[RMDB]
RNA sequence: GGGAACGACUCGAGUAGAGUCGAAAACGAUUAGCAUUCGUGCUAAUCGAAUCAGGUAGUACCUAACUCUAUUACCUGUAGUGGCCAACGUCCGGACAGAGAAUCGAGUCCUGUUCGCAGGACUCAACGGUUCGUCUAAGUUCGCUUAGACGAACCGAAAAGAAACAACAACAACAAC
Reactivity to DMS in 0.01 (KOAc 150mM, MgCl2 10mM, bicine 150mM(pH8.5), 24C), signal-to-noise 1, nucleotides 027 to 126: c000g030a000u000u000a000g010c010a040u020u040c160g080u000g020c000u000a030a000u100c020g010a040a010u000c010a020g030g000u000a030g000u000a000c210c130u000a090a130c260u000c230u000a010u000u000a010c020c010u000g000u000a040g010u020g030g030c010c070a130a140c130g000u010c030c020g000g000a080c060a120g010a140g000a070a120u010c140g020a000g000u010c000c000u000g030u000u010c250g000c010a020g010g000a000c000u000c010a050a030
Reactivity to 2A3 in 0.01 (KOAc 150mM, MgCl2 10mM, bicine 150mM(pH8.5), 24C), signal-to-noise 1, nucleotides 027 to 126: c010g010a010u040u020a010g000c030a000u040u100c190g060u090g030c010u010a010a000u000c000g000a010a080u080c010a010g000g000u020a010g010u000a040c000c040u070a150a060c010u020c010u100a040u050u060a030c020c000u010g000u030a150g070u010g060g000c020c050a070a040c010g040u010c050c010g000g010a070c060a040g110a010g030a100a120u190c100g000a010g030u040c000c000u000g030u000u010c160g030c070a020g000g000a010c000u000c040a000a000